[RMDB]
RNA sequence: GGGAACGACUCGAGUAGAGUCGAAAAGAUAUGGAAUGGACCACAGUUCAACAGCUAGGCUCGGAAACGAGCCUAGACAUGAACGUGGACCAUUCCUAAGUCAAAGCGGGUCCUUCGGGACCCGCAAUCAUUAAUAGUUGUUCGCAACUAUUAAUGAAAAAGAAACAACAACAACAAC
Reactivity to DMS in 0.01 (KOAc 150mM, MgCl2 10mM, bicine 150mM(pH8.5), 24C), signal-to-noise 2, nucleotides 027 to 126: g010a030u010a300u000g000g000a010a000u000g010g010a160c000c010a010c000a170g020u010u010c000a040a120c300a180g000c010u000a010g000g010c000u000c000g020g000a090a090a250c000g000a020g010c000c000u000a000g000a020c090a160u000g000a000a010c000g030u000g010g010a090c000c000a010u000u000c000c000u000a020a080g000u000c050a080a140a150g000c000g020g010g000u000c000c010u000u010c180g050g030g010a000c010c000c000g010c010a010a020
Reactivity to 2A3 in 0.01 (KOAc 150mM, MgCl2 10mM, bicine 150mM(pH8.5), 24C), signal-to-noise 1, nucleotides 027 to 126: g020a030u060a070u160g000g020a000a020u000g010g020a000c020c000a020c040a090g000u020u030c030a100a110c040a200g080c000u000a000g000g000c000u010c010g000g060a070a070a090c030g000a000g000c000c000u000a010g000a010c020a030u060g010a010a000c020g010u000g020g000a000c020c000a000u020u000c000c000u010a040a000g010u020c040a110a000a090g020c030g000g000g070u050c020c030u080u210c300g050g020g000a000c010c000c030g000c000a000a000